An RNA of 177 nucleotides, treated with DMS and read out base by base. The reactions ran in a buffer of 150 mM KOAc, 10 mM MgCl2 and 150 mM bicine (pH 8.5), at 24 C.
[RMDB]
RNA sequence: GGGAACGACUCGAGUAGAGUCGAAAAGAUAUGGAGACUCUCCCGACCAUAGAGAGCGAUAAGACCCACUCGGAAACGAGUGAGGUCUUUUGACGCUCUACUAUGGUCGGGAGAGUCUCCUAAGUCAUCACUUACCUAAGUUCGCUUAGGUAAGUGAAAAAGAAACAACAACAACAAC
Reactivity to DMS in 0.01 (KOAc 150mM, MgCl2 10mM, bicine 150mM(pH8.5), 24C), signal-to-noise 1, nucleotides 027 to 126: g000a040u000a300u000g040g000a020g000a010c000u000c000u000c000c010c020g010a020c000c000a020u000a020g020a060g000a030g040c000g000a090u000a010a040g000a010c000c000c000a040c000u000c010g020g000a140a150a220c000g000a020g040u000g010a080g000g010u000c000u000u000u000u010g010a200c080g000c000u000c000u000a040c000u000a000u000g000g000u010c030g010g010g000a000g000a000g000u000c000u000c000c000u000a000a050g000u000c020a210